[RMDB]
An RNA of 177 nucleotides, treated with 2A3 and DMS and read out base by base.
The 2A3 profile rests on 1,900 reads.
For DMS the reverse transcriptase was MarathonRT.
RNA sequence: GGGAACGACUCGAGUAGAGUCGAAAAUAUAUCGAACAGGACUCCAUCGACGACAAGUCAUAUCACUUACUGAACUACGAAAUGACACAGACGAAGAACCUGCUUGUGAUCCUGGCAAAGACAAGCAGACCUGGUGACUAUUCGUAGUCACCAGGUCAAAAGAAACAACAACAACAAC
Reactivity to 2A3 in 0.01 (KOAc 150mM, MgCl2 10mM, bicine 150mM(pH8.5), 24C), signal-to-noise 3, nucleotides 027 to 126: u150a010u040a000u000c060g000a040a010c000a060g090g060a030c030u000c000c060a030u040c040g010a000c000g030a060c050a170a000g060u130c020a000u100a000u050c050a020c080u000u180a070c050u090g060a150a030c060u060a030c120g070a080a080a150u070g020a010c000a010c040a020g030a060c100g020a100a040g010a020a020c000c020u020g010c040u020u020g040u030g030a060u010c010c000u040g000g010c040a110a060a000g030a040c010a020a000g040c010a000
Reactivity to DMS in 0.01 (KOAc 150mM, MgCl2 10mM, bicine 150mM(pH8.5), 24C), signal-to-noise 2, nucleotides 027 to 126: u000a170u110a080u030c040g000a040a010c090a080g000g000a060c060u000c020c010a120u000c030g000a070c060g040a160c060a140a110g000u000c050a040u000a020u000c040a060c040u000u000a080c140u040g000a040a180c070u010a040c300g000a060a040a120u000g000a040c050a090c070a000g040a010c090g000a070a070g000a130a230c080c050u000g000c000u040u000g000u000g000a040u000c000c000u000g000g000c140a000a100a050g000a010c050a040a010g000c040a080